[RMDB]
RNA sequence: GGGAACGACUCGAGUAGAGUCGAAAAUUGUCACGCACGUCUGCGGGGAACGUGGCCGAUGCCGAUCUGGCUGAAUGGCCCACCUCCAUUGAGCGGAUUCAACAACACUACCCGGAAGCACAGUUCGGCACGUAAGCAACUUCGGUUGCUUACGUGCAAAAGAAACAACAACAACAAC
Reactivity to 2A3 in 0.01 (KOAc 150mM, MgCl2 10mM, bicine 150mM(pH8.5), 24C), signal-to-noise 1, nucleotides 027 to 126: u010u010g050u040c000a000c240g000c010a020c090g110u000c000u050g000c070g060g000g020g040a130a180c160g100u300g050g000c020c010g050a060u010g000c000c030g120a300u070c110u160g060g000c000u000g160a130a070u250g000g020c010c010c000a030c000c000u000c000c000a060u060u160g070a030g020c010g000g010a020u130u050c080a030a010c050a050a030c000a010c040u100a090c020c000c000g000g000a040a060g020c030a030c000a130g010u080u040c060g060
Structure probing data (2A3) for a 177-nucleotide construct. It was measured as part of the RMDB library OK2TRN.